Source: RMDB library OK3TST, as collected in RNAgym. Chemical mapping of a 207-nucleotide RNA with 2A3. Reactivities are given for positions 27 through 156.
RNA sequence: GGGAACGACUCGAGUAGAGUCGAAAAUAGCGGCCGAGGAACUGGAGUACUCGUGCCUCACCGGGUGAGACCGUCACCAGCCCGGCCAGGCCGACCAGGGUGACGAUUCCCAGCACGAUUCCGACCGCGAGCAGCCACCAGGUCGAGGUCGCGCCGCGGACGGAAUUAACUUCGGUUAAUUCCGUCCAAAAGAAACAACAACAACAAC
Reactivity to 2A3 in 0.01 (KOAc 150mM, MgCl2 10mM, bicine 150mM(pH8.5), 24C), signal-to-noise 2, nucleotides 027 to 156: u100a010g020c020g000g000c000c000g030a040g030g030a140a090c060u140g070g030a050g070u110a080c000u010c010g040u060g040c020c020u020c000a080c030c030g010g000g000u090g050a100g020a030c020c050g020u000c000a010c030c000a000g020c020c040c000g000g000c050c040a070g020g010c010c020g030a080c040c050a060g020g090g000u010g000a000c010g010a000u040u060c060c000c000a010g020c080a010c080g020a050u140u060c020c020g000a040c040c020g060c050g020a060g050c110a030g050c040c100a100c020c010a000g010g030u040c030g010a000g010g020u010c000g000c030g010c040c010g080c030